An RNA of 177 nucleotides, treated with 2A3 and DMS and read out base by base. Values cover nucleotides 27 to 126.
[RMDB]
RNA sequence: GGGAACGACUCGAGUAGAGUCGAAAAGAUAUGGAUCGGUGGUGGCUUUUGACGGGGAUUCGGAAACGAAUCCACCGAUAAGCCAUACCGAUCCUAAGUCAAACAGGUUCACUUCGGUGAACCUGAAGGUUAAAAUAUGGUUCGCCAUAUUUUAACCAAAAGAAACAACAACAACAAC
Reactivity to 2A3 in 0.01 (KOAc 150mM, MgCl2 10mM, bicine 150mM(pH8.5), 24C), signal-to-noise 4, nucleotides 027 to 126: g010a010u040a020u100g000g000a010u010c010g030g000u100g100g060u010g000g040c030u100u160u180u220g130a080c020g010g010g020g000a000u000u010c010g020g010a040a040a020c010g000a010a010u010c000c000a030c020c000g010a010u030a140a030g000c020c000a010u000a000c000c000g000a000u010c000c000u000a000a000g010u000c010a020a060a130c000a000g010g010u000u000c010a010c010u050u150c300g140g000u000g000a000a010c000c000u000g000a020a030
Reactivity to DMS in 0.01 (KOAc 150mM, MgCl2 10mM, bicine 150mM(pH8.5), 24C), signal-to-noise 6, nucleotides 027 to 126: g010a040u000a300u000g000g000a010u000c000g000g000u000g020g060u000g010g010c000u000u000u010u010g010a200c220g020g000g010g000a010u000u000c000g000g000a090a060a170c010g000a010a010u000c000c000a030c000c000g010a110u000a010a020g010c000c000a010u000a010c000c000g000a010u000c000c000u000a000a070g000u010c020a110a110a300c020a000g000g000u000u000c000a010c000u000u020c220g020g010u000g000a010a000c000c000u000g000a020a030